[RMDB]
RNA sequence: GGGAACGACUCGAGUAGAGUCGAAAAACCACCAGGUUGCCUAAGGAGGGGUGAACCGGCCCAGGUCGGAAACGGAGCAGGUCAAAACUCCCGUGCUGAUCAGUAGUGGGAUCGCGCCUGUGAAUAGGAUAAGGACUAUCUUCGGAUAGUCCUUAUCAAAAGAAACAACAACAACAAC
Reactivity to DMS in 0.01 (KOAc 150mM, MgCl2 10mM, bicine 150mM(pH8.5), 24C), signal-to-noise 4, nucleotides 027 to 126: a060c040c010a160c140c060a070g000g010u010u000g020c010c040u010a120a090g020g010a090g040g010g000g010u010g010a100a080c050c010g020g000c030c010c050a100g020g010u020c080g000g000a050a060a070c050g010g000a110g010c030a030g000g000u010c100a050a070a100a130c170u000c010c000c000g020u000g010c020u000g010a090u000c100a050g030u000a060g020u020g010g010g000a050u000c090g010c170g010c010c010u020g020u000g000a080a070u020a100g010
Reactivity to 2A3 in 0.01 (KOAc 150mM, MgCl2 10mM, bicine 150mM(pH8.5), 24C), signal-to-noise 1, nucleotides 027 to 126: a000c030c010a010c030c030a020g000g010u020u080g030c010c000u080a110a060g090g030a000g000g040g010g020u030g020a040a010c030c000g000g000c020c050c040a060g000g080u040c020g050g000a110a040a030c000g000g020a050g040c050a000g010g030u090c000a030a040a040a120c030u010c000c030c000g010u040g020c030u090g030a190u100c080a020g090u130a040g080u080g000g030g020a010u050c040g000c010g000c020c000u050g000u020g010a090a140u150a150g120

This 177-nucleotide RNA was probed chemically with DMS and 2A3. For 2A3, 1,973 sequencing reads were counted. The DMS profile rests on 3,536 reads. The reactions ran in a buffer of 150 mM KOAc, 10 mM MgCl2 and 150 mM bicine (pH 8.5), at 24 C.